[RMDB]
RNA sequence: GGGAACGACUCGAGUAGAGUCGAAAAAUGAGGUCGUACAAUGUGUUGUCAUAUGGGGAAGAUUAAUGACGGUAUGUACGACCAAGAGUAUGUUUGAGAAAUCUUCCCCAUAUUCAGGCAUACUCAAGGUUGACGUAGAUUUCGAUCUGCGUCAACCAAAAGAAACAACAACAACAAC
Reactivity to 2A3 in 0.01 (KOAc 150mM, MgCl2 10mM, bicine 150mM(pH8.5), 24C), signal-to-noise 5, nucleotides 027 to 126: a010u300g060a040g030g000u010c000g020u010a000c030a050a100u210g120u070g070u250u250g000u030c000a020u090a140u180g010g000g010g010a020a020g000a080u190u230a170a100u170g010a010c020g060g020u170a070u040g000u000a000c000g000a010c000c000a010a000g000a010g000u010a010u000g020u000u010u010g050a050g060a020a090a040u000c010u000u000c000c000c000c000a000u010a020u040u010c000a000g010g000c000a000u000a000c000u000c010a030a030
Reactivity to DMS in 0.01 (KOAc 150mM, MgCl2 10mM, bicine 150mM(pH8.5), 24C), signal-to-noise 3, nucleotides 027 to 126: a090u020g000a130g000g010u000c000g040u000a010c000a060a090u050g030u030g040u010u040g010u000c020a060u010a070u030g000g000g000g000a030a000g010a220u040u030a110a070u010g000a040c060g010g010u030a050u010g000u000a000c010g000a010c010c000a020a000g000a010g000u000a000u000g010u010u000u000g000a030g020a040a070a090u020c000u000u000c000c000c000c010a010u000a010u040u010c010a000g000g010c010a000u000a000c010u000c000a120a120
Chemical mapping of a 177-nucleotide RNA with 2A3 and DMS. DMS adducts were read by reverse transcription with MarathonRT. The reactions ran in a buffer of 150 mM KOAc, 10 mM MgCl2 and 150 mM bicine (pH 8.5), at 24 C.